[RMDB]
RNA sequence: GGGAACGACUCGAGUAGAGUCGAAAAAGUUAGGUUCGCUAUGGUGCAACUCUUUAAGGCAAUAGCGAACUAAUUCUAAGCAAGUAAUGGAGAAAUGCCAGGGUCACUAUCUAGCCAUAAUAGUGCUGUAAGUGACUUAGAUUCGUCUAAGUCACAAUAUCAAUCUGAGCUUCGGCUCAGAUUGAUAAAAAGAAACAACAACAACAAC
Reactivity to DMS in 0.01 (KOAc 150mM, MgCl2 10mM, bicine 150mM(pH8.5), 24C), signal-to-noise 1, nucleotides 027 to 156: a130g050u020u000a090g010g010u020u000c060g020c000u000a060u000g010g050u020g000c020a080a110c110u010c050u000u020u010a100a100g050g030c000a020a030u000a020g010c020g000a000a020c000u000a030a060u000u000c060u000a160a160g000c080a090a060g020u000a020a100u000g020g000a150g000a070a120a060u010g000c060c010a120g020g000g020u010c000a030c020u000a080u000c060u010a140g000c050c040a130u020a060a080u000a140g060u010g020c020u000g010u000a060a220g040u000g000a030c000u000u000a000g000a060u010u010c300g020u000c000u000a000a020g000u000c000a000c010a020a100
Reactivity to 2A3 in 0.01 (KOAc 150mM, MgCl2 10mM, bicine 150mM(pH8.5), 24C), signal-to-noise 1, nucleotides 027 to 156: a000g050u020u060a040g000g010u010u010c000g070c000u000a020u050g260g100u100g110c080a230a160c060u100c080u280u280u300a090a030g110g000c000a000a040u010a000g000c000g000a000a000c000u000a010a000u050u000c030u050a020a020g040c040a110a000g040u080a120a000u110g030g020a050g100a040a070a030u110g000c040c050a090g070g000g030u070c030a020c000u010a020u040c020u060a020g040c010c010a070u090a040a030u070a070g090u070g000c030u040g060u120a280a110g010u000g030a000c000u000u000a000g010a000u010u010c150g010u000c120u010a000a000g000u000c020a000c010a000a010

This 207-nucleotide RNA was probed chemically with DMS and 2A3. The reactions ran in a buffer of 150 mM KOAc, 10 mM MgCl2 and 150 mM bicine (pH 8.5), at 24 C. 2A3 is a SHAPE reagent: it acylates the 2'-hydroxyl of flexible nucleotides of all four kinds. The 2A3 profile rests on 673 reads. For DMS the reverse transcriptase was MarathonRT.